Overview
The record gives the reactivity of an RNA of 207 nucleotides to 2A3.
RNA sequence: GGGAACGACUCGAGUAGAGUCGAAAAAGGUGAUUUCUCCUGCACCUUUAUCAAUGGAAGAACUCGACUUUGCUGUGGGUCCCAAAGGGACCUUAGGUGCAGACAGUUACCGGCGGUGAAGUGUGAGCAUAGGUUCGUGUCUUCGGACACGAACCAACUGCUAAACAUGCUUCGGCAUGUUUAGCAGAAAAGAAACAACAACAACAAC
Reactivity to 2A3 in 0.01 (KOAc 150mM, MgCl2 10mM, bicine 150mM(pH8.5), 24C), signal-to-noise 1, nucleotides 027 to 156: a010g030g040u070g010a080u120u120u000c020u000c020c020u010g010c000a000c000c000u020u140u020a130u080c160a030a070u190g040g000a150a000g020a060a070c050u030c090g060a040c020u010u000u050g000c010u040g000u170g030g010g010u000c000c000c020a120a150a010g000g000g020a000c000c000u020u110a050g000g000u010g000c000a000g070a130c020a000g030u050u040a040c000c020g020g000c020g000g080u010g010a010a010g040u040g070u130g150a040g060c120a130u120a150g010g000u000u000c000g000u000g000u000c000u020u010c210g030g000a000c000a000c000g000a000a000c000c000a000a000
The RNA was probed in 150 mM KOAc, 10 mM MgCl2 and 150 mM bicine (pH 8.5) at 24 C.